[RMDB]
RNA sequence: GGGAACGACUCGAGUAGAGUCGAAAAGAUAUGGACGAUGCUACCCACCGAGCAAUUUCCGUUGAUCGUCGUUGACUCGGAAACGAGUCAACGACGGGAGGAAAGCUCGAGGCAUCGUCCUAAGUCAGUAUACUUCCUACUUCGGUAGGAAGUAUACAAAAGAAACAACAACAACAAC
Reactivity to 2A3 in 0.01 (KOAc 150mM, MgCl2 10mM, bicine 150mM(pH8.5), 24C), signal-to-noise 3, nucleotides 027 to 126: g180a120u300a220u300g000g000a010c010g000a000u020g020c000u190a300c030c020c030a010c030c010g000a010g030c100a280a300u000u000u000c010c010g090u190u030g000a020u030c010g000u000c020g040u020u000g010a010c010u000c030g020g000a000a050a010c010g000a000g010u030c010a000a010c010g000a000c000g000g020g000a010g000g000a000a000a060g250c000u000c000g000a020g010g000c000a000u000c000g000u000c000c010u000a010a010g070u020c100a020
Reactivity to DMS in 0.01 (KOAc 150mM, MgCl2 10mM, bicine 150mM(pH8.5), 24C), signal-to-noise 3, nucleotides 027 to 126: g010a150u010a190u010g030g010a030c010g030a000u000g020c000u000a160c020c010c030a300c110c000g010a010g000c010a140a080u010u000u000c000c000g010u000u020g000a030u010c000g000u010c020g000u010u010g010a030c000u020c000g010g000a070a090a250c000g020a030g000u010c010a020a020c000g000a000c000g000g010g000a000g010g000a020a010a070g020c030u000c020g010a090g010g000c010a010u000c010g010u000c000c000u000a000a070g010u010c200a120